[RMDB]
Conditions: 150 mM KOAc, 10 mM MgCl2 and 150 mM bicine (pH 8.5), 24 C. The record gives the reactivity of an RNA of 177 nucleotides to DMS and 2A3. For 2A3 the reverse transcriptase was SuperScript II with manganese.
RNA sequence: GGGAACGACUCGAGUAGAGUCGAAAAUUACUAGUCUGUGAUGAAUUGCUUUGACUUCUGACACCUCGUAUGAAAACUCCACGUGCAGUCUGAUUAUUUAGCAAGACUGAGGCUUAAAAUAAAUCAACCAUGCGGUUAUAUUCGUAUAACCGCAUGGAAAAGAAACAACAACAACAAC
Reactivity to DMS in 0.01 (KOAc 150mM, MgCl2 10mM, bicine 150mM(pH8.5), 24C), signal-to-noise 1, nucleotides 027 to 126: u000u010a170c050u010a080g000u010c040u000g010u000g010a050u000g010a020a070u000u000g040c030u000u000u010g010a060c080u000u020c030u000g020a060c090a040c090c050u000c100g030u010a100u010g000a060a060a110a150c080u020c050c080a080c100g020u000g020c010a030g030u000c010u000g000a070u010u000a120u000u000u000a100g030c050a060a060g000a070c020u000g010a050g000g000c090u000u030a040a040a080a040u000a060a100a070u000c120a050a140
Reactivity to 2A3 in 0.01 (KOAc 150mM, MgCl2 10mM, bicine 150mM(pH8.5), 24C), signal-to-noise 1, nucleotides 027 to 126: u080u020a060c060u000a020g020u100c020u070g150u020g000a090u000g020a080a180u120u040g020c020u090u030u030g020a140c000u020u010c000u090g050a010c000a100c040c000u060c080g040u170a030u150g080a090a050a050a080c010u060c050c000a070c080g030u040g000c050a030g000u010c020u010g030a050u070u110a120u210u170u040a100g010c030a020a000g000a000c000u010g030a010g000g040c010u070u050a060a020a050a000u140a060a200a020u040c020a000a130